[RMDB]
RNA sequence: GGGAACGACUCGAGUAGAGUCGAAAAAGGUAAAACACAGUAACGAUUUGGCACGAUGUCAGCUCACGGACAAGUGUACAAAUUUAAUUCACUUGUCCGAAUGCUCGAAUUUAAGACCUAGCAUUCGCUAUGGAAAAGACUUCGGUCUUUUCCAUAGAAAAGAAACAACAACAACAAC
Reactivity to 2A3 in 0.01 (KOAc 150mM, MgCl2 10mM, bicine 150mM(pH8.5), 24C), signal-to-noise 2, nucleotides 027 to 126: a030g150g000u120a100a080a020a020c070a010c030a050g050u090a110a020c040g030a070u040u040u150g020g000c030a010c080g030a040u060g060u100c000a010g000c010u050c030a040c000g000g010a000c010a000a000g020u010g010u010a010c100a010a100a040u140u200u220a050a070u050u060c010a010c000u000u010g000u000c000c000g000a000a000u020g000c000u040c040g030a010a000u070u080u080a100a050g010a000c010c000u000a020g040c010a040u050u070c020g000
Reactivity to DMS in 0.01 (KOAc 150mM, MgCl2 10mM, bicine 150mM(pH8.5), 24C), signal-to-noise 3, nucleotides 027 to 126: a070g020g010u010a040a060a090a070c050a080c120a070g020u020a050a110c130g000a070u000u000u000g010g010c010a100c100g010a060u010g010u000c050a040g000c010u000c160a300c020g010g020a020c010a000a020g010u000g020u000a090c230a050a070a120u010u010u010a060a130u020u000c000a000c010u000u000g000u000c010c010g010a010a040u000g000c010u000c090g010a030a110u010u000u020a060a070g000a170c050c010u000a070g020c080a060u000u000c070g020

Notes:
An RNA of 177 nucleotides, treated with 2A3 and DMS and read out base by base. The 2A3 profile rests on 2,429 reads.